[RMDB]
Source: RMDB libraries RFM100 and RFMREP, as collected in RNAgym. An RNA of 177 nucleotides, treated with 2A3 and DMS and read out base by base.

RNA sequence: GGGAACGACUCGAGUAGAGUCGAAAAGUUCAAGCGCGGGGAGUCAAUCGGACACGACCCGAAACCGGAUGAUCUAGACAUGGGCAAGACGAAGCGUGCCGAAAGGCACGUGGAGGUCUGCUAGCGUUCGUUCACUAUGUUUCGACAUAGUGAACGAAAAAGAAACAACAACAACAAC
Reactivity to 2A3 in 0.01 (KOAc 150mM, MgCl2 10mM, bicine 150mM(pH8.5), 24C), signal-to-noise 4, nucleotides 027 to 126: g030u050u060c070a090a030g050c030g010c010g040g040g000g000a070g020u060c090a080a210u140c050g020g010a010c030a010c120g060a060c020c020c000g000a050a010a010c040c010g020g000a060u080g020a030u050c060u140a060g060a110c010a110u140g060g030g000c080a120a030g000a010c000g000a000a000g000c000g000u010g000c000c000g040a060a030a020g000g000c000a000c000g000u000g000g000a010g080g100u000c000u010g000c010u000a010g040c000g060u000
Reactivity to DMS in 0.01 (KOAc 150mM, MgCl2 10mM, bicine 150mM(pH8.5), 24C), signal-to-noise 2, nucleotides 027 to 126: g000u010u010c020a080a090g000c040g010c010g030g000g000g000a110g020u030c060a020a120u040c030g000g000a080c090a090c130g020a130c030c010c020g000a020a050a050c120c080g000g010a060u000g010a050u000c020u030a100g010a110c130a120u030g000g010g000c040a020a060g020a000c000g000a300a190g000c000g000u010g000c010c000g000a050a080a220g000g000c000a000c000g000u000g000g000a300g000g000u000c000u010g000c000u000a160g000c110g010u000
High DMS reactivity at an A or C suggests that its Watson-Crick edge is free.